An RNA of 177 nucleotides, treated with 2A3 and DMS and read out base by base. DMS (dimethyl sulfate) methylates the pairing face of unpaired adenines and cytosines. It was measured as part of the RMDB library 15KREP. The reactions ran in a buffer of 150 mM KOAc, 10 mM MgCl2 and 150 mM bicine (pH 8.5), at 24 C.
RNA sequence: GGGAACGACUCGAGUAGAGUCGAAAAUUUCAGCAUGUCGUGCGUAUUUGGAUUCACGCACGACACAGCAGUUAACAAUCGAAGUCUUAGUGACUGUCGAUGGUGUAAAUUUUAGAACAGUCGUUCUCUAUCUGUUUCUGUUCGCAGAAACAGAUAGAAAAGAAACAACAACAACAAC
Reactivity to 2A3 in 0.01 (KOAc 150mM, MgCl2 10mM, bicine 150mM(pH8.5), 24C), signal-to-noise 3, nucleotides 027 to 126: u010u010u030c040a020g010c000a020u000g000u000c000g000u000g010c000g020u030a120u060u130u240g300g040a160u170u120c050a000c020g000c010a000c010g000a000c000a000c010a000g000c010a010g020u080u130a080a010c020a030a000u000c010g000a010a000g040u020c010u060u180a170g040u120g220a010c000u050g200u030c000g000a010u010g000g030u080g010u020a060a070a050u040u080u050u080a030g000a080a020c010a020g020u010c000g010u020u000c000u040
Reactivity to DMS in 0.01 (KOAc 150mM, MgCl2 10mM, bicine 150mM(pH8.5), 24C), signal-to-noise 2, nucleotides 027 to 126: u000u000u000c040a140g020c010a300u000g000u000c000g010u000g000c010g030u000a120u010u000u010g020g010a200u020u010c130a000c010g060c000a010c010g000a010c010a000c060a070g000c020a050g020u000u010a080a090c080a110a040u000c010g000a100a010g010u000c000u000u030a170g030u000g000a000c000u000g000u000c000g030a010u000g000g000u000g000u000a020a010a010u010u010u000u000a140g000a080a110c140a040g010u000c020g000u000u000c000u000